[RMDB]
Overview: The record gives the reactivity of an RNA of 207 nucleotides to DMS and 2A3. 2A3 adducts were read by reverse transcription with SuperScript II with manganese. Values are in units of 0.01, from 0 to 300, in steps of 10. The RNA was probed in 150 mM KOAc, 10 mM MgCl2 and 150 mM bicine (pH 8.5) at 24 C.
RNA sequence: GGGAACGACUCGAGUAGAGUCGAAAAAAGUGGGGAUGUUAAUGUGGUGGAAUGUUGGGCUGUACCAGAUGGUUGGGCUUGGUGGGCUAAUUUCUGACUUGCCCUAUCCAAGCUUAGAGUUGGAUCAUGUGGCCCAAUUGAAGAAAUGGACUACUUGCAUCGUAGUAUUCUUCGGAAUACUACGAUGAAAAGAAACAACAACAACAAC
Reactivity to DMS in 0.01 (KOAc 150mM, MgCl2 10mM, bicine 150mM(pH8.5), 24C), signal-to-noise 1, nucleotides 027 to 156: a070a040g000u000g000g020g000g000a040u000g020u000u000a050a080u020g050u000g020g050u010g010g010a110a110u000g010u000u020g000g010g020c030u000g000u000a100c120c020a120g010a060u010g030g000u000u000g010g040g020c010u000u000g030g030u000g000g010g000c030u010a020a080u010u010u010c160u000g000a070c160u000u000g000c000c010c030u010a080u000c010c020a000a040g040c000u000u000a030g020a130g020u000u000g010g010a090u020c030a080u010g000u000g000g000c000c020c000a040a040u000u010g010a110a170g000a060a060a130u000g000g010a070c030u000a120c020u000u010g020
Reactivity to 2A3 in 0.01 (KOAc 150mM, MgCl2 10mM, bicine 150mM(pH8.5), 24C), signal-to-noise 3, nucleotides 027 to 156: a010a000g100u090g000g020g000g020a050u060g010u080u070a060a000u050g000u060g010g040u060g030g070a090a070u070g040u030u010g050g010g000c020u020g010u040a070c020c010a010g060a150u050g050g030u040u020g020g000g020c000u000u000g000g000u010g000g010g000c020u090a070a080u120u190u190c130u100g090a110c050u020u120g000c010c000c010u020a050u040c010c010a000a010g000c000u020u040a010g010a010g020u040u040g010g030a040u080c020a070u170g030u070g040g000c000c000c030a020a030u040u070g030a040a040g020a050a110a040u100g030g000a020c030u030a010c000u060u050g020